[RMDB]
Chemical mapping of a 177-nucleotide RNA with DMS and 2A3. For 2A3 the reverse transcriptase was SuperScript II with manganese. The RNA was probed in 150 mM KOAc, 10 mM MgCl2 and 150 mM bicine (pH 8.5) at 24 C.
RNA sequence: GGGAACGACUCGAGUAGAGUCGAAAAGAUGGUGAUCGGAAUAUCAAUCUCACCUUAAUCGAAAUGGGAAUGGCUUGGGCAUACCGUCAAACGCAACCUAUUUACCAACAAGCUCAACUGCAGGCUCCUACUGUAACAACUUCGGUUGUUACAGUAGAAAAGAAACAACAACAACAAC
Reactivity to DMS in 0.01 (KOAc 150mM, MgCl2 10mM, bicine 150mM(pH8.5), 24C), signal-to-noise 5, nucleotides 027 to 126: g010a070u010g010g030u010g020a030u010c100g030g020a100a100u010a120u010c080a070a080u010c030u000c030a070c040c030u000u020a120a100u000c080g000a040a090a080u000g010g000g000a090a080u010g000g000c060u000u010g000g010g010c060a100u000a050c080c050g000u000c060a040a050a090c110g000c050a060a110c050c030u000a050u000u000u000a110c060c040a040a070c130a060a090g010c020u000c040a050a070c080u000g010c060a060g000g000c050u000c110
Reactivity to 2A3 in 0.01 (KOAc 150mM, MgCl2 10mM, bicine 150mM(pH8.5), 24C), signal-to-noise 6, nucleotides 027 to 126: g060a030u100g010g030u030g000a060u100c100g060g100a130a090u180a030u190c050a090a070u010c020u010c030a030c020c010u050u100a100a070u100c090g030a030a010a090u080g020g010g030a040a120u080g050g000c040u040u050g030g000g010c020a040u050a140c020c040g030u030c020a060a040a020c070g000c030a010a050c000c000u030a060u060u090u070a100c040c020a040a070c020a080a010g010c000u020c060a040a090c030u050g000c030a020g020g000c010u050c000